[RMDB]
RNA sequence: GGGAACGACUCGAGUAGAGUCGAAAAGCUUGCUCUUAUGAAGUUAGCGGCGGACGGGUGAGUAACACGUGGGUAACCUGCCCAUAAGACUGGGAUAACUCCGGGAAACCGGGGCUAAUACCGGAUACAUAAAAUCCCUAUUCGUAGGGAUUUUAUGAAAAGAAACAACAACAACAAC
Reactivity to 2A3 in 0.01 (KOAc 150mM, MgCl2 10mM, bicine 150mM(pH8.5), 24C), signal-to-noise 8, nucleotides 027 to 126: g030c020u030u070g020c010u010c010u090u240a170u220g070a060a040g060u060u080a020g060c030g030g010c020g010g020a010c020g030g000g010u060g030a060g030u060a090a020c020a020c140g030u040g000g020g000u020a050a090c000c030u060g010c000c000c000a010u050a030a050g070a030c040u040g000g000g000a010u020a030a020c000u000c000c000g000g010g000a030a050a010c010c000g000g000g000g010c010u010a020a010u050a110c000c000g010g010a070u070a060
Reactivity to DMS in 0.01 (KOAc 150mM, MgCl2 10mM, bicine 150mM(pH8.5), 24C), signal-to-noise 9, nucleotides 027 to 126: g000c040u000u000g000c020u000c040u010u020a110u030g010a140a080g010u010u010a060g010c030g010g010c040g000g010a070c120g010g010g020u000g000a100g000u010a080a100c110a060c100g010u000g010g010g010u010a120a140c120c120u020g000c020c010c010a040u000a070a110g000a120c030u010g000g000g000a070u010a100a180c010u000c000c000g010g000g000a090a080a200c010c000g000g000g000g000c010u000a100a080u030a070c000c010g020g000a140u010a130

An RNA of 177 nucleotides, treated with 2A3 and DMS and read out base by base. It was measured as part of the RMDB libraries RFM100 and RFMREP. High 2A3 reactivity points to a flexible backbone, as in loops and unpaired stretches.